[RMDB]
The data come from the RNA Mapping Database (RMDB), library M2RFPK. This 207-nucleotide RNA was probed chemically with DMS and 2A3. The 2A3 profile rests on 4,515 reads. The RNA was probed in 150 mM KOAc, 10 mM MgCl2 and 150 mM bicine (pH 8.5) at 24 C. For DMS, 5,992 sequencing reads were counted.

RNA sequence: GGGAACGACUCGAGUAGAGUCGAAAAAUUCGCCGAGAAGCCUCUGUUCGAAAUCAUCGGGAGUGAUCCAGAUGACGGUCCUGCCAUGAGACCGCAACGAGGGCAUGUCGCAUCGAAUGGACUCGGGUAUACUAGGUGACGUUCGCGUCACCUAGAACUUGGUCUAACAAUUCGUUGUUAGACCAAGAAAAGAAACAACAACAACAAC
Reactivity to DMS in 0.01 (KOAc 150mM, MgCl2 10mM, bicine 150mM(pH8.5), 24C), signal-to-noise 3, nucleotides 027 to 156: a140u000u000c030g010c090c030g000a090g010a170a140g020c020c010u010c000u010g010u000u000c040g010a070a100a060u000c010a000u010c040g020g030g010a080g000u010g010a260u000c000c000a080g010a050u000g000a060c020g000g000u010c030c030u000g030c060c240a090u000g010a060g000a050c010c010g030c080a060a050c020g000a080g000g000g000c090a090u000g030u000c070g020c040a140u000c050g010a080a300u000g010g000a110c030u010c010g000g010g000u000a120u000a140c000u000a010g020g000u000g000a010c010g020u000u000c300g010c030g040u000c000a000c010c000u000a000g010a040a120
Reactivity to 2A3 in 0.01 (KOAc 150mM, MgCl2 10mM, bicine 150mM(pH8.5), 24C), signal-to-noise 3, nucleotides 027 to 156: a010u090u060c040g030c000c010g010a020g030a110a060g050c030c020u030c110u140g040u050u050c040g030a100a080a060u040c020a010u030c050g030g020g000a040g030u170g050a080u020c010c020a070g040a110u090g080a120c020g000g000u000c000c010u040g160c020c020a070u090g020a020g020a140c000c030g000c060a020a040c030g040a090g000g030g010c010a020u160g060u050c020g000c100a060u040c020g040a040a020u030g020g000a020c000u000c010g010g030g030u090a070u030a170c000u000a000g000g000u000g000a000c000g000u030u030c220g040c000g080u000c000a000c000c000u000a000g000a000a000